[RMDB]
RNA sequence: GGGAACGACUCGAGUAGAGUCGAAAAAUCGUUGGCAUCGCACAGUGCGUUGGGUUUCUCGCCGAUCGACGAGAGGCUGGACUGCCUUCGCAUAGGUGUCCGUCUGGUGAACAGCGGUGUAAAGACGCGUCCGUGCAUACUUCGGUAUGCACGGACGAAAAGAAACAACAACAACAAC
Reactivity to 2A3 in 0.01 (KOAc 150mM, MgCl2 10mM, bicine 150mM(pH8.5), 24C), signal-to-noise 1, nucleotides 027 to 126: a010u180c090g000u000u070g040g000c050a020u020c020g000c000a060c060a060g020u000g070c020g000u000u060g070g000g000u000u160u000c000u000c000g000c000c000g030a300u150c040g210a080c020g000a000g000a010g030g080c120u130g000g000a020c060u050g000c040c000u100u130c040g000c050a020u060a060g000g080u000g000u000c040c040g010u000c050u260g100g000u040g090a020a050c000a050g000c030g000g090u070g000u200a200a180a020g100a000c020g000
Reactivity to DMS in 0.01 (KOAc 150mM, MgCl2 10mM, bicine 150mM(pH8.5), 24C), signal-to-noise 1, nucleotides 027 to 126: a000u010c000g070u040u000g000g000c020a080u000c040g000c050a120c150a130g000u000g020c010g010u000u050g000g040g000u040u000u000c030u000c220g030c040c000g020a200u000c300g000a150c030g040a040g000a080g000g000c030u000g000g000a000c010u020g010c010c000u010u000c050g100c220a000u000a000g010g020u020g000u000c000c060g030u020c000u050g000g000u010g000a120a140c150a040g010c020g000g010u000g050u010a060a110a180g010a090c100g000

Source information: The record gives the reactivity of an RNA of 177 nucleotides to 2A3 and DMS. For 2A3, 550 sequencing reads were counted. The RNA was probed in 150 mM KOAc, 10 mM MgCl2 and 150 mM bicine (pH 8.5) at 24 C.